Chemical mapping of a 177-nucleotide RNA with DMS and 2A3.
RNA sequence: GGGAACGACUCGAGUAGAGUCGAAAAAUAAAGAGCGUACAUCUCUCUCAGACUGUUCGACAGUCUGACUCUCUCGUACAAUCGCUCAACGAGAGAGAGAGAGCGUUCAAAGAAGCGAGAAAAAAAACUUAUCAUAUUUCUUCGGAAAUAUGAUAAGAAAAGAAACAACAACAACAAC
Reactivity to DMS in 0.01 (KOAc 150mM, MgCl2 10mM, bicine 150mM(pH8.5), 24C), signal-to-noise 1, nucleotides 027 to 126: a100u000a020a060a100g020a010g000c010g040u000a050c110a230u000c030u000c030u010c300u000c000a020g010a010c000u000g030u000u000c220g010a050c020a010g000u000c010u000g010a300c010u000c000u000c020u000c000g050u000a080c050a070a060u000c040g000c000u000c060a280a040c030g000a030g040a000g030a020g000a060g020a040g010a090g020c020g000u000u000c050a090a100a020g020a160a030g020c030g020a040g010a030a000a000a080a040a090a180a220
Reactivity to 2A3 in 0.01 (KOAc 150mM, MgCl2 10mM, bicine 150mM(pH8.5), 24C), signal-to-noise 2, nucleotides 027 to 126: a000u160a010a190a030g010a000g000c020g000u040a070c150a290u000c020u020c000u000c010u010c030a010g000a020c020u040g080u150u250c210g190a060c040a000g000u010c000u020g000a000c000u000c000u000c010u000c000g000u030a040c120a160a280u020c030g010c020u030c020a030a000c000g020a000g020a000g000a000g000a000g000a010g000a050g030c000g000u010u000c060a120a040a030g090a050a000g000c010g000a050g100a220a000a000a020a030a010a010a000